Structure probing data (2A3) for a 207-nucleotide construct.
[RMDB]
RNA sequence: GGGAACGACUCGAGUAGAGUCGAAAACGUAUGCGAUGGCUAAAGAAGAUAUUCGCUACUAUCUCAAUGGCAUGAUGAUUGAGAAGUCUCCGCAUGGUGGUGUCAGGGUAGUAGCCACUAACGGUCAUCAUAUGAUCGCAAUCCGGGCGGCAGGAGCCGCACGUCGCUACUUCGGUAGCGACGUGCGAAAAGAAACAACAACAACAAC
Reactivity to 2A3 in 0.01 (KOAc 150mM, MgCl2 10mM, bicine 150mM(pH8.5), 24C), signal-to-noise 2, nucleotides 027 to 156: c010g010u080a020u080g020c050g060a040u060g020g070c120u130a070a040a020g220a150a000g010a060u070a080u160u150c040g020c010u000a000c000u000a010u050c030u000c090a010a070u060g020g000c070a020u030g100a050u060g040a020u050u100g020a040g010a120a120g050u050c060u000c020c030g020c100a030u100g090g000u050g030g040u040g050u030c070a040g000g020g020u000a000g010u000a000g030c000c000a020c020u070a060a020c030g000g050u030c000a050u000c030a000u080a030u180g040a040u070c030g000c110a030a000u020c040c020g020g000g000c020g010g000c050a080g040g100a040g010c020

Source information:
For 2A3, 663 sequencing reads were counted. Source: RMDB library OK3TST, as collected in RNAgym. The RNA was probed in 150 mM KOAc, 10 mM MgCl2 and 150 mM bicine (pH 8.5) at 24 C. Reactivities are given for positions 27 through 156.